[RMDB]
RNA sequence: GGGAACGACUCGAGUAGAGUCGAAAAAGACAAAAUAAUGGCAUUGGCAUUAGUGAUCCACUUACACAGGCCAAAAGGAUGUGGGAUUUAGUGUUACUAUGAAGGAAAGAGAAUCAGAGAUCUCUGGUAAGCCACUGAAUUUCGAUUCAGUGGCUUAAAAAGAAACAACAACAACAAC
Reactivity to DMS in 0.01 (KOAc 150mM, MgCl2 10mM, bicine 150mM(pH8.5), 24C), signal-to-noise 1, nucleotides 027 to 126: a090g040a090c110a060a030a100a070u010a110a080u000g010g030c100a090u020u010g020g030c030a040u000u000a050g020u010g020a110u000c040c040a060c130u010u000a110c010a040c040a010g000g000c000c020a060a030a070a130g040g000a060u000g000u000g000g020g020a070u000u000u010a040g020u010g010u000u010a080c090u040a010u010g010a040a080g000g020a060a070a020g000a100g000a040a070u000c120a120g000a120g040a130u000c030u000c010u000g010g010